[RMDB]
RNA sequence: GGGAACGACUCGAGUAGAGUCGAAAAUGCUGCAGAUGAAGCUUCCGACGCGGUCCACAUCAGCGCAGGAUGACAUCAGCGGCGACUGCUGCAUCUGCUACGCUUAUCGCCUGCCUCCUGCGCAGCCGCCGUGAGCACAGUUCGCUGUGCUCACGGCAAAAGAAACAACAACAACAAC
Reactivity to 2A3 in 0.01 (KOAc 150mM, MgCl2 10mM, bicine 150mM(pH8.5), 24C), signal-to-noise 1, nucleotides 027 to 126: u090g020c010u000g010c010a010g000a090u040g010a150a000g000c000u090u060c030c050g050a060c010g030c010g000g040u050c020c020a130c030a160u160c110a040g030c030g000c000a020g030g000a020u050g080a030c030a120u200c070a120g010c000g060g000c020g010a010c040u080g000c010u060g000c010a080u090c100u100g000c050u090a040c130g000c040u100u120a160u140c030g010c020c000u060g070c030c010u090c000c060u000g000c010g040c010a000g000c010c000